An RNA of 177 nucleotides, treated with DMS and 2A3 and read out base by base. For DMS the reverse transcriptase was MarathonRT. For 2A3 the reverse transcriptase was SuperScript II with manganese.
RNA sequence: GGGAACGACUCGAGUAGAGUCGAAAAGGAUCUAUAGGGUAUGAUACUUUAUUUACAGCGGAAUGGUAUACAAAGUCAACAGAUCUCACUGAAUAAAAAAUAGGAUGUAUGGCUACACAAACCGUUGUCACUUCUAGUACUUCGGUACUAGAAGUGAAAAAGAAACAACAACAACAAC
Reactivity to DMS in 0.01 (KOAc 150mM, MgCl2 10mM, bicine 150mM(pH8.5), 24C), signal-to-noise 2, nucleotides 027 to 126: g020g000a030u020c030u010a150u030a200g020g010g000u000a150u000g000a110u000a040c030u000u010u000a050u020u010u010a180c010a040g020c030g030g020a050a220u000g000g020u000a080u000a090c190a120a030a020g000u000c070a050a050c100a070g000a090u000c040u000c150a080c100u010g010a090a110u020a000a010a010a060a080a120u020a100g020g020a070u000g000u000a100u000g000g000c040u000a070c090a080c030a040a040a190c010c000g020u000u000g000
Reactivity to 2A3 in 0.01 (KOAc 150mM, MgCl2 10mM, bicine 150mM(pH8.5), 24C), signal-to-noise 2, nucleotides 027 to 126: g020g010a020u000c020u040a070u190a060g040g030g050u080a050u090g060a010u050a080c000u020u080u040a110u050u240u070a040c010a000g000c000g000g000a030a040u040g020g010u110a130u010a150c100a110a290a020g010u020c000a020a010c000a020g130a250u040c020u060c040a020c030u050g070a150a120u170a170a060a000a000a000a000u220a060g000g040a000u020g010u070a130u060g000g010c000u070a020c120a000c010a100a050a010c000c020g000u010u010g030